[RMDB]
The record gives the reactivity of an RNA of 177 nucleotides to 2A3 and DMS. It was measured as part of the RMDB library OK2TST. The DMS profile rests on 5,246 reads. For 2A3 the reverse transcriptase was SuperScript II with manganese. The reactions ran in a buffer of 150 mM KOAc, 10 mM MgCl2 and 150 mM bicine (pH 8.5), at 24 C.

RNA sequence: GGGAACGACUCGAGUAGAGUCGAAAAUGGUCUGUUUCCUAGUGGGAAAAGGUUUGUAUGCAUCCUGCCUUUUGGACUUUGGGGAAUAUAGAUAAAUUGAAUCUACCUGAUUAAUGGACCCAAAUCACUAAUUGGCAUUAUUCGUAAUGCCAAUUAGAAAAGAAACAACAACAACAAC
Reactivity to 2A3 in 0.01 (KOAc 150mM, MgCl2 10mM, bicine 150mM(pH8.5), 24C), signal-to-noise 4, nucleotides 027 to 126: u050g040g010u010c000u010g020u010u020u000c020c010u000a030g040u050g000g050g080a020a050a000a000g090g020u130u300u110g100u080a130u200g100c050a060u140c010c010u000g000c010c000u060u100u030u050g120g170a060c000u110u080u070g060g000g000g020a040a040u210a020u060a110g010a020u050a060a130a080u040u060g020a010a050u000c000u000a040c000c020u020g020a030u050u090a130a130u140g020g010a020c010c010c010a090a110a060u190c120a070
Reactivity to DMS in 0.01 (KOAc 150mM, MgCl2 10mM, bicine 150mM(pH8.5), 24C), signal-to-noise 5, nucleotides 027 to 126: u010g020g010u000c020u000g010u000u000u000c000c000u000a070g020u000g000g020g010a050a040a040a030g000g010u000u010u000g020u010a090u010g010c190a100u000c080c030u000g010c020c020u000u000u000u000g020g010a130c040u000u010u000g020g000g000g000a040a030u010a090u010a040g000a020u000a040a090a190u000u000g000a070a060u000c020u000a040c020c010u000g010a030u010u010a070a100u010g010g000a270c010c010c020a060a080a110u020c240a280